The record gives the reactivity of an RNA of 177 nucleotides to 2A3 and DMS. It was measured as part of the RMDB library OK1LIB. The DMS profile rests on 2,749 reads. DMS (dimethyl sulfate) methylates the pairing face of unpaired adenines and cytosines. For 2A3, 1,493 sequencing reads were counted. For 2A3 the reverse transcriptase was SuperScript II with manganese.

RNA sequence: GGGAACGACUCGAGUAGAGUCGAAAAGGCGUCCAAAGGCUGGAACUUGCCGGGUCUGAUGUGCGCUCAGGUGAUCCUGUCUAACCGCCGUGACGCCCACGACUGGGACCGGAUCAACAUGUUGCACAAGGAGCAUCCAAUUCGUUGGAUGCUCCUUAAAAGAAACAACAACAACAAC
Reactivity to 2A3 in 0.01 (KOAc 150mM, MgCl2 10mM, bicine 150mM(pH8.5), 24C), signal-to-noise 3, nucleotides 027 to 126: g000g000c010g000u060c010c060a150a130a010g130g000c060u020g020g020a070a160c140u080u140g010c050c000g020g020g010u000c000u010g030a070u130g060u010g000c030g000c010u020c100a020g000g150u030g020a000u030c000c000u020g000u010c030u050a140a140c000c020g000c010c000g030u010g040a060c000g070c010c030c010a000c000g020a020c030u070g000g060g000a010c000c040g000g000a010u060c010a010a030c080a040u130g060u070u110g040c010a030c050
Reactivity to DMS in 0.01 (KOAc 150mM, MgCl2 10mM, bicine 150mM(pH8.5), 24C), signal-to-noise 2, nucleotides 027 to 126: g010g000c030g000u000c070c090a050a080a130g000g030c030u010g000g000a030a040c250u000u060g010c030c060g020g000g000u040c070u020g020a140u000g010u000g030c030g000c060u020c070a060g010g010u020g010a030u000c000c000u000g010u000c010u010a090a200c020c110g000c000c000g020u000g000a110c160g040c160c130c000a020c070g010a030c040u050g000g110g000a000c020c060g030g000a020u000c020a020a110c080a070u050g040u030u020g020c050a090c060